Structure probing data (2A3) for a 207-nucleotide construct. The 2A3 profile rests on 515 reads. The RNA was probed in 150 mM KOAc, 10 mM MgCl2 and 150 mM bicine (pH 8.5) at 24 C. 2A3 adducts were read by reverse transcription with SuperScript II with manganese.
RNA sequence: GGGAACGACUCGAGUAGAGUCGAAAAAGCCGGUCUACGGACCGGCAAAACGUUCAUCUCGUUUUACGGGCCGCAUUAAGAUUGAAGCCAAGGAACGGGGACUUCAGACUACGACUACGGUCGUAAAUUACGCCUCCGAGUUUCGACUCGGAGGCAACUUAUUAACGUCCUUCGGGACGUUAAUAAGAAAAGAAACAACAACAACAAC
Reactivity to 2A3 in 0.01 (KOAc 150mM, MgCl2 10mM, bicine 150mM(pH8.5), 24C), signal-to-noise 1, nucleotides 027 to 156: a000g020c020c000g070g020u000c000u000a080c260g120g020a020c000c000g060g020c010a000a000a000a020c060g000u090u140c100a220u090c020u010c010g000u030u040u050u130a040c090g010g020g020c050c050g140c040a030u120u200a060a060g020a190u040u090g060a060a000g020c000c020a030a100g050g000a020a000c000g040g000g020g000a020c020u110u070c090a060g040a090c070u020a010c030g000a010c010u000a020c270g070g000u000c000g000u000a000a000a000u110u080a040c110g000c000c000u020c000c000g020a000g000u030u070u050c080g080a000c000u000c010g000g020a000g000g000c000a000a000